[RMDB]
RNA sequence: GGGAACGACUCGAGUAGAGUCGAAAACACAUUCUAUUCGUAGAAUGUGGAACGUAGAGAGAUCGAGAGCGUCGCAGCUAUGUCGAACGAGGAAGAGCGCGCAGGGAUCGGGCUUCGGCCCGAUCAAAGGUAUUGUUGAUUUCGAUCAACAAUACCUAAAAGAAACAACAACAACAAC
Reactivity to DMS in 0.01 (KOAc 150mM, MgCl2 10mM, bicine 150mM(pH8.5), 24C), signal-to-noise 6, nucleotides 027 to 126: c010a010c000a000u000u000c000u000a030u000u020c170g040u000a010g000a010a000u000g010u000g000g000a080a060c130g010u000a060g010a110g010a100g000a060u000c030g000a080g000a090g010c050g020u000c080g020c060a080g020c050u000a040u000g010u000c040g010a060a110c100g000a090g000g010a040a040g010a060g010c060g010c070g020c110a100g010g010g010a010u000c010g010g000g000c000u000u020c220g030g010c000c000c000g000a000u000c010a020a040
Reactivity to 2A3 in 0.01 (KOAc 150mM, MgCl2 10mM, bicine 150mM(pH8.5), 24C), signal-to-noise 4, nucleotides 027 to 126: c000a010c000a000u000u010c000u020a020u050u070c160g090u030a000g000a010a010u000g000u010g030g010a050a000c040g060u130a010g040a020g010a010g010a140u060c060g020a030g010a040g140c030g030u080c040g000c010a020g010c010u090a060u170g100u090c050g050a090a080c060g030a070g070g050a070a030g020a000g040c040g000c000g000c040a040g150g040g000a000u010c000g010g010g000c010u040u050c200g110g000c000c000c000g000a000u000c000a010a020
This 177-nucleotide RNA was probed chemically with DMS and 2A3. For DMS, 9,983 sequencing reads were counted. The data come from the RNA Mapping Database (RMDB), library M2PK50. For 2A3 the reverse transcriptase was SuperScript II with manganese. Reactivities are rounded to 0.1 and cut off at 0 and 3.